Chemical mapping of a 177-nucleotide RNA with DMS and 2A3. Values cover nucleotides 27 to 126.

[RMDB]
RNA sequence: GGGAACGACUCGAGUAGAGUCGAAAAGACAAGUGCUUCGGCACUUGUCAAAUAAGCAAGUAGAAAUGGCCAAACUACAUGCAACGAAAGAAAGGCCAUAAAAAACUGUCCAGUUCGCUGGACAGAAGAUACCUAUUCGGUUCGCCGAAUAGGUAUCAAAAGAAACAACAACAACAAC
Reactivity to DMS in 0.01 (KOAc 150mM, MgCl2 10mM, bicine 150mM(pH8.5), 24C), signal-to-noise 1, nucleotides 027 to 126: g000a010c000a000a000g040u000g020c000u000u000c220g030g000c000a000c000u000u010g010u000c030a000a090a040u010a080a110g000c000a060a030g000u000a020g000a040a000a030u000g000g000c000c000a260a270a010c010u030a000c020a080u000g010c000a130a140c150g010a110a090a120g020a090a100a040g020g040c010c010a100u020a000a050a050a070a070a040c000u000g030u000c000c010a000g000u000u000c180g040c000u000g000g010a000c000a000g020a030a080
Reactivity to 2A3 in 0.01 (KOAc 150mM, MgCl2 10mM, bicine 150mM(pH8.5), 24C), signal-to-noise 3, nucleotides 027 to 126: g000a000c000a010a000g000u020g010c030u020u160c240g070g000c000a000c000u010u020g000u000c000a000a000a000u020a020a020g030c010a040a090g010u000a000g020a010a050a010u010g000g020c010c000a030a000a020c010u010a000c000a020u040g000c030a180a130c130g170a210a100a080g150a130a160a030g010g010c020c020a000u050a010a060a000a000a000a000c000u010g000u000c000c010a000g010u040u070c130g040c090u000g000g000a000c000a000g000a000a010
Description
It was measured as part of the RMDB library M2PK50. The RNA was probed in 150 mM KOAc, 10 mM MgCl2 and 150 mM bicine (pH 8.5) at 24 C.